[RMDB]
RNA sequence: GGGAACGACUCGAGUAGAGUCGAAAACGGACUUGGUCGCCACGCUUAGCUCCCCCUGACCUGCUUUUGAACCCGCUAAUCCACCCCAACUCUUGCCCCGACGUUCACUCCACGCGCUAAUUCCCGGAGUAUCACAAAACUUCGGUUUUGUGAUACUAAAAGAAACAACAACAACAAC
Reactivity to DMS in 0.01 (KOAc 150mM, MgCl2 10mM, bicine 150mM(pH8.5), 24C), signal-to-noise 6, nucleotides 027 to 126: c090g010g010a100c070u010u010g010g030u010c040g000c030c030a060c090g010c050u020u000a120g010c050u000c020c010c020c050c020u000g000a090c070c030u000g010c040u010u010u020u000g020a080a100c060c010c020g020c090u020a070a080u010c030c030a080c050c020c000c040a060a080c070u010c030u010u000g010c040c000c010c040g010a080c090g010u000u010c050a070c050u000c020c030a060c060g000c040g020c040u010a060a150u000u000c000c010c010g010g000
Reactivity to 2A3 in 0.01 (KOAc 150mM, MgCl2 10mM, bicine 150mM(pH8.5), 24C), signal-to-noise 7, nucleotides 027 to 126: c030g030g020a020c020u070u110g070g010u070c020g010c030c010a050c030g050c030u080u130a020g030c010u050c020c000c000c000c000u010g030a050c010c010u030g040c020u060u070u040u120g030a030a040c010c000c000g000c040u050a050a050u020c020c010a030c010c000c000c000a020a060c010u040c020u040u080g020c010c000c000c000g020a040c030g040u030u070c020a020c030u010c010c000a040c040g060c000g000c020u030a070a060u030u000c000c000c000g000g010

Notes:
An RNA of 177 nucleotides, treated with DMS and 2A3 and read out base by base. The 2A3 profile rests on 9,927 reads. The data come from the RNA Mapping Database (RMDB), libraries RFM100 and RFMREP. The reactions ran in a buffer of 150 mM KOAc, 10 mM MgCl2 and 150 mM bicine (pH 8.5), at 24 C. Reactivities are given for positions 27 through 126.